[RMDB]
RNA sequence: GGGAACGACUCGAGUAGAGUCGAAAAUCCGAAAAGGAGAGGCCCACGGCAACUUCUUUGUUCACAGCGUCGAAAAUGCUGUGAAAUACACCUGUACUCUCAUAAACGGAAGAGUUCUUGAAUUUUCAACUCAAGGAAGGGAAAACGCCAUCAUCUCCCUUGAAUCCCAUUUCGAUGGGAUUCAAGGAAAAGAAACAACAACAACAAC
Reactivity to 2A3 in 0.01 (KOAc 150mM, MgCl2 10mM, bicine 150mM(pH8.5), 24C), signal-to-noise 2, nucleotides 027 to 156: u000c000c000g050a100a010a000a010g020g000a010g000a100g060g000c060c000c060a050c080g000g000c040a080a060c010u070u060c020u060u060u070g060u000u010c000a010c000a010g000c000g040u160c210g170a040a040a000a060u130g000c000u000g000u000g000a000a020a000u060a000c090a040c000c040u070g040u170a020c000u030c000u000c010a040u230a180a300a040c060g020g030a070a080g000a060g020u030u070c000u000u010g030a030a030u040u080u080u180c120a090a080c070u010c070a000a000g040g020a000a020g030g050g040a000a110a020a100c120g010c060c000a000u060c000a090u000c060u030c000
The data come from the RNA Mapping Database (RMDB), library OK3TST. Chemical mapping of a 207-nucleotide RNA with 2A3. For 2A3, 662 sequencing reads were counted. For 2A3 the reverse transcriptase was SuperScript II with manganese. The RNA was probed in 150 mM KOAc, 10 mM MgCl2 and 150 mM bicine (pH 8.5) at 24 C.